[RMDB]
RNA sequence: GGGAACGACUCGAGUAGAGUCGAAAACUCGGGGGUGCGGGCCUCUUCCACCAGGGAGUAGAGACCGUCGCCGAACAUGAGCAUGGCGUGGUGGAUCCCCUCUUUGGCGCAGGCCUCUGCGAGGGGAUCACGGGAAUCCGUUCGCGGAUUCCCGUGAAAAAGAAACAACAACAACAAC
Reactivity to DMS in 0.01 (KOAc 150mM, MgCl2 10mM, bicine 150mM(pH8.5), 24C), signal-to-noise 1, nucleotides 027 to 126: c010u000c040g030g020g010g000g040u010g020c050g010g010g050c050c000u000c010u010u010c010c010a160c230c250a170g000g000g010a030g010u010a050g000a100g010a090c030c030g030u020c010g030c020c040g010a070a070c120a080u000g010a130g000c060a060u000g000g000c090g000u000g010g000u000g010g030a040u000c000c000c000c000u000c000u000u010u000g030g020c000g010c300a150g000g000c010c030u000c060u010g010c150g010a030g010g010g020g000a000
Background:
The data come from the RNA Mapping Database (RMDB), library OK2TRN. The record gives the reactivity of an RNA of 177 nucleotides to DMS.